Description
Chemical mapping of a 177-nucleotide RNA with DMS. The DMS profile rests on 852 reads. The RNA was probed in 150 mM KOAc, 10 mM MgCl2 and 150 mM bicine (pH 8.5) at 24 C. Source: RMDB library OK2TRN, as collected in RNAgym.
[RMDB]
RNA sequence: GGGAACGACUCGAGUAGAGUCGAAAAAGAGACGGGGUUUCACCAUGCUGGCCAGACUGGUCUCGAACUCCUGACCUCAAGUGAUCCGCCUGCCUUGGCAUCCCAAAGUGCUGAGAUUACUAGUGUGGCUUCGGUCAGUAUUCGUACUGACCGAAGCAAAAGAAACAACAACAACAAC
Reactivity to DMS in 0.01 (KOAc 150mM, MgCl2 10mM, bicine 150mM(pH8.5), 24C), signal-to-noise 1, nucleotides 027 to 126: a110g000a060g000a040c070g010g010g000g000u010u010u000c070a060c050c030a060u020g000c070u000g010g000c030c010a050g020a150c080u010g000g020u010c020u020c060g010a010a080c150u000c000c010u000g000a080c020c040u000c060a110a160g010u000g000a010u000c050c090g050c020c040u000g000c110c000u010u000g000g000c080a030u010c000c010c050a090a090a120g020u020g030c030u000g000a130g000a130u000u000a100c110u010a080g000u000g010u000g020